[RMDB]
RNA sequence: GGGAACGACUCGAGUAGAGUCGAAAACUCACUCACUACGGUGAGUGAGAAUCUUAAGGCUCAAUAAAGCUUGCCUUGAGGUCCCUCAAGCAGAUAUAGACUGAAACAUUUAGUACACUCAAGCAGGGAGCAACGGCUCGAGUACGCUCGAGCCGAAUCGUAAUCCGGGAUUCGUCCCGGAUUACGAAAAAGAAACAACAACAACAAC
Reactivity to 2A3 in 0.01 (KOAc 150mM, MgCl2 10mM, bicine 150mM(pH8.5), 24C), signal-to-noise 1, nucleotides 027 to 156: c010u000c000a010c000u010c000a010c000u000a030c140g100g030u030g000a000g000u000g030a000g010a000a030u000c010u050u040a040a020g020g000c000u000c120a250a280u160a220a140a040g090c100u120u050g020c020c000u020u000g030a020g020g000u030c130c000c000u010c130a000a080g000c040a010g040a030u110a020u150a180g190a100c010u000g020a210a050a000c030a070u130u100u060a010g010u010a040c000a030c020u030c040a030a040g000c000a060g020g110g050a020g030c060a040a090c000g000g010c020u000c000g000a000g010u060a040c150g020c060u020c000g080a080g000c010c000g000a000a010
Notes
Chemical mapping of a 207-nucleotide RNA with 2A3.